[RMDB]
RNA sequence: GGGAACGACUCGAGUAGAGUCGAAAACUGCUGAACAUAAUAACAUAGGUCCGCUUAGCAAUAUCAAGACAUUAUUACCGCUGUCAACAUUUCUUGUCCGUCAGUGGACUUACAAGAAUUGAACCGACCGGAGGGCUACGUUCGCGUAGCCCUCCGGAAAAGAAACAACAACAACAAC
Reactivity to 2A3 in 0.01 (KOAc 150mM, MgCl2 10mM, bicine 150mM(pH8.5), 24C), signal-to-noise 1, nucleotides 027 to 126: c100u040g050c020u110g000a050a230c000a010u160a080a040u050a240a000c060a150u080a010g040g040u000c000c000g000c000u040u120a000g010c000a000a270u070a060u300c010a070a040g170a110c010a040u100u100a060u130u070a160c000c000g000c040u090g050u050c010a000a040c000a100u020u020u030c000u000u000g070u080c110c000g000u000c000a080g200u080g200g000a000c000u080u060a000c000a000a000g000a020a020u000u020g070a070a070c000c000g000a000
Source: RMDB library OK1LIB, as collected in RNAgym. Chemical mapping of a 177-nucleotide RNA with 2A3. The RNA was probed in 150 mM KOAc, 10 mM MgCl2 and 150 mM bicine (pH 8.5) at 24 C.